Chemical mapping of a 177-nucleotide RNA with DMS. Values cover nucleotides 27 to 126. It was measured as part of the RMDB library TTRINS. For DMS the reverse transcriptase was MarathonRT.

RNA sequence: GGGAACGACUCGAGUAGAGUCGAAAAGAUAUGGAAAAUCGUGUGUACUCCCCACCUUAUGAACUACAGUUAAGUCUCGGAAACGAGACCAUACUGCAUAAGAGGUACACACGAUUUUCCUAAGUCAUCUAGAUCCUCUGUUCGCAGAGGAUCUAGAAAAAGAAACAACAACAACAAC
Reactivity to DMS in 0.01 (KOAc 150mM, MgCl2 10mM, bicine 150mM(pH8.5), 24C), signal-to-noise 1, nucleotides 027 to 126: g010a090u000a300u000g010g000a000a000a020a000u000c000g000u000g000u000g030u000a020c010u010c120c050c000c020a300c200c010u000u010a010u000g000a060a140c200u040a300c080a000g030u010u030a150a300g020u000c000u000c000g000g000a120a170a300c000g040a010g000a000c000c040a050u000a010c000u000g000c000a010u000a030a030g010a030g010g000u000a010c000a000c000a020c000g000a010u000u000u000u000c000c000u010a010a120g010u000c080a140